[RMDB]
RNA sequence: GGGAACGACUCGAGUAGAGUCGAAAAGCCUGCCCUGUCCAAGCACAGAGUUGGAUCACGAGGCCCAAAUGAAAAUAUGGGCUUCUUGAUUCCUAAAGUGGGGCGGACCGCAUGAGGCUGGCUUCACAGAGCAGUGAACAGCUCCCGCUCUGUGCAGGAUGAUGGUCUUGUUCGCAAGACCAUCAUCAAAAGAAACAACAACAACAAC
Reactivity to 2A3 in 0.01 (KOAc 150mM, MgCl2 10mM, bicine 150mM(pH8.5), 24C), signal-to-noise 1, nucleotides 027 to 156: g050c030c030u000g020c010c050c000u000g000u040c030c020a120a070g040c010a000c000a000g070a010g000u090u160g070g000a000u000c000a000c010g000a000g010g000c000c000c000a030a120a100u280g190a180a060a030a000u240a110u120g000g000g000c000u000u000c000u000u000g000a000u080u200c000c000u080a080a050a050g100u130g060g030g010g020c050g000g000a020c080c010g070c130a120u060g060a070g080g020c000u000g030g000c000u010u110c010a010c010a010g160a010g010c070a000g050u010g060a010a030c010a080g010c010u050c000c020c010g000c000u030c010u000g000u030g050c020a030g030